[RMDB]
RNA sequence: GGGAACGACUCGAGUAGAGUCGAAAAAGAGGAGUUGGUCAAGAAAAGAGAGGAGUGUCUGGAUGCACUAGAAUCCAUCAUGACCACCAAGUCAGUGAGCUUCAGACGUCUCAGUCAUUUGAGAAAACUCGGCUUAGCUCUUCGGAGCUAAGCCGAGAAAAGAAACAACAACAACAAC
Reactivity to 2A3 in 0.01 (KOAc 150mM, MgCl2 10mM, bicine 150mM(pH8.5), 24C), signal-to-noise 1, nucleotides 027 to 126: a000g070a040g030g000a130g030u050u000g000g090u020c010a160a000g090a120a220a010a000g210a000g050a000g000g050a030g070u190g000u020c040u050g080g060a090u300g000c040a050c030u040a040g090a010a080u000c090c020a020u000c000a000u000g030a010c010c040a000c020c000a230a000g010u070c020a000g120u030g060a000g020c010u060u030c010a000g050a000c030g140u000c010u000c010a050g110u040c020a110u000u000u220g050a030g020a000a080a000a000
Reactivity to DMS in 0.01 (KOAc 150mM, MgCl2 10mM, bicine 150mM(pH8.5), 24C), signal-to-noise 1, nucleotides 027 to 126: a040g160a000g000g000a300g000u000u000g040g000u000c050a100a170g000a090a050a090a170g000a100g000a000g000g000a000g030u000g000u000c050u000g000g000a040u090g010c060a060c190u010a160g000a010a040u000c050c000a140u000c050a120u000g000a010c000c080a120c300c300a070a190g050u000c000a000g060u000g000a160g000c100u000u000c000a060g050a050c080g010u000c000u000c040a100g000u010c160a040u080u000u210g000a030g000a100a000a000a000
The record gives the reactivity of an RNA of 177 nucleotides to 2A3 and DMS. It was measured as part of the RMDB library OK1LIB. Conditions: 150 mM KOAc, 10 mM MgCl2 and 150 mM bicine (pH 8.5), 24 C.